[RMDB]
This 177-nucleotide RNA was probed chemically with DMS and 2A3. The RNA was probed in 150 mM KOAc, 10 mM MgCl2 and 150 mM bicine (pH 8.5) at 24 C. It was measured as part of the RMDB library OK2TST.

RNA sequence: GGGAACGACUCGAGUAGAGUCGAAAAGUGUGCUGCGGUGGCAUGACCUACGCGAGAGACCCCAAGGUGGGCACUGUGGGAGGUCCCGUGCCCUCCGUUGAGGCGAAGAUCCUGGGCAUCCCCGAGACUUAUAAUCACGGUUCGCCGUGAUUAUAAGAAAAGAAACAACAACAACAAC
Reactivity to DMS in 0.01 (KOAc 150mM, MgCl2 10mM, bicine 150mM(pH8.5), 24C), signal-to-noise 7, nucleotides 027 to 126: g020u000g020u010g020c030u010g030c050g020g010u000g010g030c130a060u000g000a080c010c000u000a040c120g000c060g010a050g010a230g000a170c070c000c010c020a040a070g000g010u000g000g000g010c010a010c020u010g040u010g010g000g000a200g020g000u010c010c020c060g000u000g000c010c010c000u000c000c020g010u000u010g010a060g000g000c020g010a090a100g000a110u000c020c020u000g000g010g010c030a090u000c010c000c000c050g010a110g010a170
Reactivity to 2A3 in 0.01 (KOAc 150mM, MgCl2 10mM, bicine 150mM(pH8.5), 24C), signal-to-noise 5, nucleotides 027 to 126: g080u070g020u030g040c030u030g040c040g070g030u110g070g000c080a050u100g040a140c000c020u030a030c080g010c080g030a030g010a010g040a160c020c010c000c010a020a010g040g000u030g000g010g010c010a010c070u110g020u290g080g040g020a180g060g250u180c000c000c010g010u010g000c000c000c000u000c000c000g010u040u080g030a050g040g010c040g010a040a010g040a080u020c010c010u030g010g000g000c010a030u020c000c000c010c000g030a020g020a020